RNA sequence: GGGAACGACUCGAGUAGAGUCGAAAAUUUAGGUAGCAGGCAUAUAAUUUUAUUACACCAGACAUUAUGAUUAUAUUUGGCUGUAAACUGUUCUUUCUUGCAAGAUUGGCAGAGAAUGUAAAGAAAGCCACUUUCUAUUAUUCGUAAUAGAAAGUGGAAAAGAAACAACAACAACAAC
Reactivity to 2A3 in 0.01 (KOAc 150mM, MgCl2 10mM, bicine 150mM(pH8.5), 24C), signal-to-noise 2, nucleotides 027 to 126: u040u040u070a010g000g000u000a000g000c020a000g110g000c060a000u050a000u030a120a060u040u080u090u130a100u050u160a010c020a050c020c000a060g110a060c000a060u100u160a060u240g030a020u010u110a020u050a000u070u130u070g050g000c030u000g050u030a080a140a040c020u000g030u090u060c000u100u040u000c000u000u070g000c000a090a020g040a210u030u030g060g000c050a000g000a000g000a060a010u040g010u090a070a040a000g030a030a090a000g000
Reactivity to DMS in 0.01 (KOAc 150mM, MgCl2 10mM, bicine 150mM(pH8.5), 24C), signal-to-noise 3, nucleotides 027 to 126: u000u010u020a050g000g010u010a090g000c030a020g000g010c060a040u010a020u010a020a050u000u010u000u000a070u020u010a090c050a070c080c080a060g010a070c070a020u000u000a040u000g000a100u000u000a040u000a040u000u010u000g000g000c120u010g010u010a040a040a170c100u000g010u000u010c030u000u000u000c020u000u000g010c060a060a050g010a140u010u000g010g010c090a010g000a040g010a110a090u000g010u000a050a020a100g010a060a050a060g000